[RMDB]
RNA sequence: GGGAACGACUCGAGUAGAGUCGAAAAUUAGAUUGAAUAGGUAUCACCAAAUCAUCAAUUGGUUCACUCAAAUCCACUUCAAAAUCUUGUAGAAGUGACAUUUGUCGUUUUCUAUUGGUCUUGGGUAGCUGACGCUCCCAUUCGUGGGAGCGUCAGCAAAAGAAACAACAACAACAAC
Reactivity to 2A3 in 0.01 (KOAc 150mM, MgCl2 10mM, bicine 150mM(pH8.5), 24C), signal-to-noise 1, nucleotides 027 to 126: u060u000a030g020a000u000u190g030a100a110u050a190g000g000u050a020u300c000a070c010c000a070a070a050u000c000a050u080c030a030a030u000u270g160g000u090u000c000a000c000u000c000a000a070a070u000c000c000a000c000u050u030c000a000a210a000a250u120c160u220u290g080u090a000g000a000a010g020u000g130a000c030a060u170u150u040g000u060c000g000u000u000u000u000c030u020a020u190u000g030g000u030c010u050u090g280g000g000u010a030